This 177-nucleotide RNA was probed chemically with DMS and 2A3. The RNA was probed in 150 mM KOAc, 10 mM MgCl2 and 150 mM bicine (pH 8.5) at 24 C. The 2A3 profile rests on 2,048 reads. Values cover nucleotides 27 to 126. For DMS the reverse transcriptase was MarathonRT.

RNA sequence: GGGAACGACUCGAGUAGAGUCGAAAAAAGAAACUGUUCAUACACAAGGUCUACUGGAGAUUUGUGACAGAAUUAUUGACCAAUAUGACUCGUGGACUGAUAUGUUUAAAGCACUACUGCAUGAAACACACCUCUACCUAUUCGUAGGUAGAGGUGUAAAAGAAACAACAACAACAAC
Reactivity to DMS in 0.01 (KOAc 150mM, MgCl2 10mM, bicine 150mM(pH8.5), 24C), signal-to-noise 4, nucleotides 027 to 126: a060a040g000a050a050a050c030u000g010u000u000c020a060u010a170c040a030c060a070a060g000g000u000c010u030a060c060u000g010g010a200g000a030u000u000u000g000u010g020a170c150a120g020a050a020u010u000a130u020u010g010a140c030c020a020a060u010a020u010g020a050c020u010c180g010u000g000g010a130c140u010g000a040u000a030u010g010u000u000u000a050a110a110g010c040a050c130u000a080c110u000g020c050a090u000g000a080a050a080c200
Reactivity to 2A3 in 0.01 (KOAc 150mM, MgCl2 10mM, bicine 150mM(pH8.5), 24C), signal-to-noise 3, nucleotides 027 to 126: a000a000g190a030a060a000c040u020g050u070u020c020a020u090a070c020a000c020a140a070g020g000u000c010u070a050c090u070g100g010a070g010a060u020u080u090g030u080g040a020c030a050g150a080a070u160u060a050u110u160g060a060c030c000a000a010u110a060u110g040a010c010u000c070g010u000g000g030a020c030u030g030a040u040a030u180g060u000u050u080a070a120a020g030c010a020c140u170a050c040u110g010c050a100u200g090a060a050a010c090